The record gives the reactivity of an RNA of 177 nucleotides to 2A3 and DMS. The RNA was probed in 150 mM KOAc, 10 mM MgCl2 and 150 mM bicine (pH 8.5) at 24 C. Source: RMDB library TTRDES, as collected in RNAgym. DMS (dimethyl sulfate) methylates the pairing face of unpaired adenines and cytosines. For DMS, 2,856 sequencing reads were counted. Values cover nucleotides 27 to 126.
RNA sequence: GGGAACGACUCGAGUAGAGUCGAAAAGAUAUGGACAAGAUCUGUCUUGAGCGUGCCCAUCGGAAACGAUGGGAGCGCAAUGAUGGACAGAGUCUUGUCCUAAGUCAAAGCGAUCUUCGGAUCGCAACCUUAUAGGCCAGUUCGCUGGCCUAUAAGGAAAAGAAACAACAACAACAAC
Reactivity to 2A3 in 0.01 (KOAc 150mM, MgCl2 10mM, bicine 150mM(pH8.5), 24C), signal-to-noise 3, nucleotides 027 to 126: g010a020u100a050u210g010g000a000c020a020a000g000a020u010c000u010g030u030c000u040u050g040a020g010c010g010u040g070c000c000c000a010u000c010g010g050a090a060a100c010g010a010u000g000g000g010a020g000c000g010c000a070a300u190g040a020u060g000g030a000c000a000g050a010g030u050c000u000u010g000u000c000c000u000a030a030g010u020c050a090a050a050g020c000g000a010u000c010u070u200c300g130g010a010u000c000g000c000a000a010
Reactivity to DMS in 0.01 (KOAc 150mM, MgCl2 10mM, bicine 150mM(pH8.5), 24C), signal-to-noise 3, nucleotides 027 to 126: g010a040u000a300u000g000g000a030c010a040a000g000a160u000c000u020g000u000c000u000u000g010a140g010c010g030u000g000c000c000c000a000u000c000g000g010a230a090a200c000g000a020u000g000g000g000a020g040c010g020c010a200a050u010g010a170u000g000g000a020c010a000g000a060g000u020c010u000u000g020u000c000c000u000a020a070g010u000c030a130a110a130g010c000g010a010u000c000u000u020c190g020g010a020u000c010g030c000a050a030